RNA sequence: GGGAACGACUCGAGUAGAGUCGAAAAUGUCACACAGUAGCGAGGGAUGCAAUUAAUUGCAACUACACCAAGCUCAAGGCUUGGAUUUCGACUAGUGUCGAGUCGUUCCCACUCGCUACGCCCACAAGUACUCUCCAUACUUCGGUAUGGAGAGUACAAAAGAAACAACAACAACAAC
Reactivity to DMS in 0.01 (KOAc 150mM, MgCl2 10mM, bicine 150mM(pH8.5), 24C), signal-to-noise 2, nucleotides 027 to 126: u010g010u020c120a080c210a160c170a050g080u000a000g010c010g020a030g010g020g030a070u010g020c020a000a050u010u000a100a100u000u000g000c020a030a060c090u000a020c090a260c010c000a000a010g030c000u010c210a110a100g000g020c000u020u000g010g000a230u000u000u000c000g010a000c010u000a000g010u000g010u000c000g010a010g010u000c000g000u000u000c000c000c010a000c000u000c000g010c000u010a020c020g000c010c030c010a060c170a080a110
Overview
Chemical mapping of a 177-nucleotide RNA with DMS. High DMS reactivity at an A or C suggests that its Watson-Crick edge is free. Values are in units of 0.01, from 0 to 300, in steps of 10. The RNA was probed in 150 mM KOAc, 10 mM MgCl2 and 150 mM bicine (pH 8.5) at 24 C. The data come from the RNA Mapping Database (RMDB), library M2PK90.